[RMDB]
RNA sequence: GGGAACGACUCGAGUAGAGUCGAAAAGAUAUGGAACUACGUGGGAGCCGUGAUGCGCCGAGCAGAGUCGGAAACGACUCUGUAUCGCAUUUACGGCGCCGGUGAAAUACCACGUAGUUCCUAAGUCCGUUUAAUUGUAGUUCGCUACAAUUAAACGAAAAGAAACAACAACAACAAC
Reactivity to DMS in 0.01 (KOAc 150mM, MgCl2 10mM, bicine 150mM(pH8.5), 24C), signal-to-noise 7, nucleotides 027 to 126: g000a050u000a270u010g000g010a010a010c010u000a000c010g020u000g010g000g000a170g020c000c000g030u000g020a020u000g000c090g040c300c140g010a270g020c010a010g000a010g020u000c000g020g000a070a080a110c010g010a010c000u000c000u000g010u000a020u010c020g000c040a060u000u000u010a030c000g000g000c020g030c210c240g000g000u010g010a120a120a110u000a250c040c000a030c000g010u000a010g000u000u000c000c000u000a010a070g000u000c020
Reactivity to 2A3 in 0.01 (KOAc 150mM, MgCl2 10mM, bicine 150mM(pH8.5), 24C), signal-to-noise 5, nucleotides 027 to 126: g030a020u060a040u130g000g000a000a010c000u000a010c010g010u020g020g070g070a100g020c010c000g040u030g010a090u090g030c120g030c150c180g030a040g020c000a000g000a010g000u000c010g000g020a040a030a020c010g010a010c000u010c000u010g000u000a050u020c010g010c020a040u070u060u300a030c020g020g000c010g010c010c020g120g050u300g090a160a140a070u240a080c020c050a010c010g010u000a000g000u000u000c000c000u010a000a000g000u000c010
The data come from the RNA Mapping Database (RMDB), library TTRDES. Chemical mapping of a 177-nucleotide RNA with DMS and 2A3. The RNA was probed in 150 mM KOAc, 10 mM MgCl2 and 150 mM bicine (pH 8.5) at 24 C. The DMS profile rests on 12,662 reads. DMS adducts were read by reverse transcription with MarathonRT. Values are in units of 0.01, from 0 to 300, in steps of 10. For 2A3 the reverse transcriptase was SuperScript II with manganese.